[RMDB]
RNA sequence: GGGAACGACUCGAGUAGAGUCGAAAAGUGCGCCGUUCUGUCUCGAGAGAGGGAGACGCAGACGCCGUCGCCUCCGAUAGGCAGCGGAGGCGUGAUUCUGGGAAACGUGCCCACGCCGGGGCCACGCCAAUAGAAGCGAUUUCGAUCGCUUCUAUUGAAAAGAAACAACAACAACAAC
Reactivity to 2A3 in 0.01 (KOAc 150mM, MgCl2 10mM, bicine 150mM(pH8.5), 24C), signal-to-noise 6, nucleotides 027 to 126: g120u120g010c020g010c030c020g070u160u060c040u070g300u010c000u010c020g140a130g000a000g000a010g050g030g030a080g000a010c030g000c050a030g040a120c040g020c050c010g040u050c000g020c010c000u000c000c010g050a070u100a180g100g000c040a010g020c010g010g020a020g000g020c000g000u010g020a060u050u040c030u040g010g040g080a060a120a040c040g020u060g020c010c000c010a040c070g060c020c020g010g000g000g020c040c010a010c020g030c010
Reactivity to DMS in 0.01 (KOAc 150mM, MgCl2 10mM, bicine 150mM(pH8.5), 24C), signal-to-noise 9, nucleotides 027 to 126: g010u010g020c030g020c020c010g000u000u000c020u000g000u000c000u000c020g000a280g000a240g010a030g020g010g000a040g000a020c060g000c100a120g010a190c060g010c030c020g010u000c010g000c000c000u000c010c010g000a100u000a060g010g020c070a170g000c020g000g000a050g000g010c000g020u000g000a090u000u000c030u000g010g010g000a090a090a130c110g000u000g010c020c000c020a090c110g010c040c040g000g000g000g010c080c050a030c090g010c130
The data come from the RNA Mapping Database (RMDB), library OK2TST. Structure probing data (2A3 and DMS) for a 177-nucleotide construct. DMS adducts were read by reverse transcription with MarathonRT. For 2A3, 14,420 sequencing reads were counted. Reactivities are given for positions 27 through 126. For 2A3 the reverse transcriptase was SuperScript II with manganese.